[RMDB]
Structure probing data (2A3 and DMS) for a 207-nucleotide construct. The RNA was probed in 150 mM KOAc, 10 mM MgCl2 and 150 mM bicine (pH 8.5) at 24 C. For 2A3 the reverse transcriptase was SuperScript II with manganese.

RNA sequence: GGGAACGACUCGAGUAGAGUCGAAAAUGCCUAAUUCAAGGAAUUAGCGUGCCUUCAUGCUAAGGGUUUGAUAUCUGCUAAACCCCGGUGCAUUCAUCAAUGCAGGUUAAGCCAAAGGGAUGUCCCGAAAAGAACGCAAGGUUCGCCUUGCGUUCAACACUUAAUGACACUUCGGUGUCAUUAAGUGAAAAGAAACAACAACAACAAC
Reactivity to 2A3 in 0.01 (KOAc 150mM, MgCl2 10mM, bicine 150mM(pH8.5), 24C), signal-to-noise 8, nucleotides 027 to 156: u110g010c010c010u040a050a060u060u070c110a140a120g110g020a090a100u010u010a020g020c040g080u030g050c020c030u090u180c050a040u100g020c010u070a030a050g010g010g020u010u000u020g100a110u090a140u140c110u150g060c040u090a030a040a070c000c000c000c020g070g030u080g000c010a030u020u090c020a060u070c040a090a090u100g020c030a010g130g010u080u140a050a020g020c020c030a060a040a040g020g000g010a040u070g060u070c010c010c000g030a030a050a010a040g010a000a000c000g000c000a000a000g020g000u040u070c110g130c030c000u000u000g000c000g000u000u000c000a000a000
Reactivity to DMS in 0.01 (KOAc 150mM, MgCl2 10mM, bicine 150mM(pH8.5), 24C), signal-to-noise 3, nucleotides 027 to 156: u000g000c010c030u010a050a090u000u000c080a110a120g010g010a110a060u000u000a060g010c010g060u020g000c050c070u000u010c090a050u000g010c010u000a100a120g020g000g030u010u000u000g020a110u000a110u000c110u000g020c060u000a060a040a060c010c000c000c000g010g030u000g020c010a030u010u000c070a110u010c100a060a130u000g020c040a070g000g000u000u000a050a120g000c020c040a030a080a150g020g010g010a110u000g010u000c020c000c010g020a070a060a110a150g000a000a020c000g000c010a020a010g010g000u000u010c300g020c020c000u010u000g020c010g030u010u010c010a050a120